RNA sequence: GGGAACGACUCGAGUAGAGUCGAAAAUCACGUCCACCGUCUUUGGUUUUUGUGUUUGAUGUGUUAUAUCGAAUAACCGAUUUAGUUGCACGGUUUAUUAUUUUUGCUUUACUAACUUCAUAAGGAGUAUAUGAUAGGGAUUCGUCCCUAUCAUAUAAAAAGAAACAACAACAACAAC
Reactivity to 2A3 in 0.01 (KOAc 150mM, MgCl2 10mM, bicine 150mM(pH8.5), 24C), signal-to-noise 3, nucleotides 027 to 126: u010c000a000c020g030u040c070c020a050c020c020g060u010c070u090u160u150g050g080u070u090u050u080u200g140u000g000u050u080u060g040a020u000g130u000g070u160u110a180u030a020u180c050g030a070a040u080a090a020c000c010g020a050u030u160u240a120g060u100u150g000c040a000c040g000g000u070u070u050a070u060u010a070u050u090u030u050u050g000c010u010u100u060a030c010u020a120a080c000u040u010c020a080u060a300a150g060g000a030g070
Reactivity to DMS in 0.01 (KOAc 150mM, MgCl2 10mM, bicine 150mM(pH8.5), 24C), signal-to-noise 9, nucleotides 027 to 126: u010c100a060c090g010u000c050c080a080c050c050g010u000c060u010u000u000g010g010u000u000u000u010u000g030u000g020u000u000u000g010a050u010g010u000g010u010u010a070u000a080u000c060g010a080a060u010a050a050c030c030g000a110u010u010u010a070g010u000u000g020c140a070c060g000g010u000u000u010a030u010u010a070u000u000u010u000u000g010c040u000u000u000a070c080u000a060a070c040u000u000c030a090u020a110a120g010g000a060g010
Source: RMDB library OK2TRN, as collected in RNAgym. This 177-nucleotide RNA was probed chemically with 2A3 and DMS.